RNA sequence: GGGAACGACUCGAGUAGAGUCGAAAAGGAUCAGCUGCCGGAGCCGGGUAAAGAGAUGAACUUUAAAUACACCAUCACCUUCAGCCGUGAUGAAGACAAACUGCAUGCGCCAGAUAACGCAUGGGUAUGACGGAUUAAAUUUCGAUUUAAUCCGUCAAAAAGAAACAACAACAACAAC
Reactivity to 2A3 in 0.01 (KOAc 150mM, MgCl2 10mM, bicine 150mM(pH8.5), 24C), signal-to-noise 3, nucleotides 027 to 126: g010g000a030u050c020a020g020c020u040g000c000c020g030g010a050g030c070c020g000g000g050u070a040a070a020g080a020g010a060u120g040a040a030c020u040u120u180a050a140a060u170a060c050a010c040c040a010u020c010a020c010c000u120u210c050a030g010c060c030g000u000g020a030u040g040a020a020g060a030c050a010a150a030c040u200g060c040a010u010g000c000g010c030c020a050g040a210u130a120a020c020g000c010a010u020g000g010g020u100a100
Reactivity to DMS in 0.01 (KOAc 150mM, MgCl2 10mM, bicine 150mM(pH8.5), 24C), signal-to-noise 5, nucleotides 027 to 126: g010g010a060u000c030a100g010c030u010g020c040c020g010g010a130g020c040c040g010g000g000u000a030a060a070g010a100g010a120u010g000a050a110c080u000u000u000a050a080a100u000a110c130a110c110c010a020u000c010a040c030c040u000u010c170a090g010c160c220g020u000g010a030u000g010a060a090g010a120c170a040a050a090c060u000g010c020a010u000g000c040g030c040c050a170g000a120u010a080a090c000g000c020a020u010g000g000g010u010a140